[RMDB]
Chemical mapping of a 207-nucleotide RNA with 2A3 and DMS.

RNA sequence: GGGAACGACUCGAGUAGAGUCGAAAAGCGGGACACAGAAUCUUUUGAUUCUCCAUUUGUGUUCGGUAGAGACAACAAGUGUAUUGAACUCACAUAGAUCGAGUAGGAUACGCCCGACUCAGGCCUCGCUGGAGAAGACGCGACAACACGACUGCGCACUUGGGGAAGGAUUCGUCCUUCCCCAAGUAAAAGAAACAACAACAACAAC
Reactivity to 2A3 in 0.01 (KOAc 150mM, MgCl2 10mM, bicine 150mM(pH8.5), 24C), signal-to-noise 1, nucleotides 027 to 156: g080c080g020g000g060a000c010a000c010a160g010a020a010u010c000u030u160u080u210g020a040u050u010c010u000c070c020a100u120u100u070g050u010g010u070u040c020g000g020u090a040g030a030g030a050c030a150a010c030a170a070g040u000g000u060a070u060u090g020a010a000c000u020c030a040c040a120u200a060g060a110u120c030g010a020g000u020a050g020g160a010u050a080c050g020c030c000c000g110a130c020u000c040a010g090g000c000c000u000c040g000c020u040g000g050a060g010a080a010g070a030c000g050c020g080a070c030a080a010c010a020c110g080a030c050u060g040c060g000c000
Reactivity to DMS in 0.01 (KOAc 150mM, MgCl2 10mM, bicine 150mM(pH8.5), 24C), signal-to-noise 1, nucleotides 027 to 156: g000c070g020g040g000a140c080a130c040a070g010a040a010u000c000u000u010u030u050g060a110u000u020c020u000c040c010a110u000u000u010g000u000g040u020u010c070g100g030u000a130g000a150g130a190c070a060a080c130a020a020g030u000g020u000a090u010u020g000a140a090c030u000c020a020c060a230u020a130g000a060u010c030g000a090g030u000a110g000g020a130u000a040c030g030c000c000c020g000a060c080u010c050a070g010g010c000c010u000c080g040c140u000g000g000a100g020a070a100g000a150c080g000c050g030a090c030a020a100c030a080c030g020a060c030u000g020c070g010c000
The RNA was probed in 150 mM KOAc, 10 mM MgCl2 and 150 mM bicine (pH 8.5) at 24 C. For 2A3, 827 sequencing reads were counted. For DMS the reverse transcriptase was MarathonRT.